[RMDB]
RNA sequence: GGGAACGACUCGAGUAGAGUCGAAAAGAGCUUAAUUCUACAUUGUCAUGGUAGAACAUGACAUGUAACGGUUAAGCUUGGUUGUGAACCGUUCGCAUGUUCUACUAUGUGACGAUAUUACAACAUAGAUAGUAUUCAUAUUCGUGUGAGUGCUAUCAAAAGAAACAACAACAACAAC
Reactivity to DMS in 0.01 (KOAc 150mM, MgCl2 10mM, bicine 150mM(pH8.5), 24C), signal-to-noise 9, nucleotides 027 to 126: g010a070g010c080u010u020a050a080u020u010c050u010a090c120a040u010u010g010u000c000a010u010g000g010u010a040g010a040a040c000a000u000g000a100c150a070u020g020u040a000a020c140g000g000u000u000a060a170g010c030u010u010g020g010u020u010g000u000g010a070a060c030c000g000u000u000c040g010c010a000u000g010u010u000c030u020a020c020u010a020u020g010u010g000a020c010g010a030u010a070u020u020a070c160a070a080c160a090u030a090
Reactivity to 2A3 in 0.01 (KOAc 150mM, MgCl2 10mM, bicine 150mM(pH8.5), 24C), signal-to-noise 9, nucleotides 027 to 126: g070a010g010c070u130u150a060a030u200u050c030u050a080c010a060u030u090g010u010c000a000u010g020g000u010a010g010a020a010c000a000u010g060a040c010a070u070g030u030a010a010c020g000g030u020u050a100a020g020c000u020u060g120g010u250u060g020u020g040a010a010c010c000g010u040u030c010g000c010a000u000g000u020u020c010u020a030c010u050a030u060g040u020g010a000c000g010a010u030a070u110u130a060c060a110a010c010a060u120a050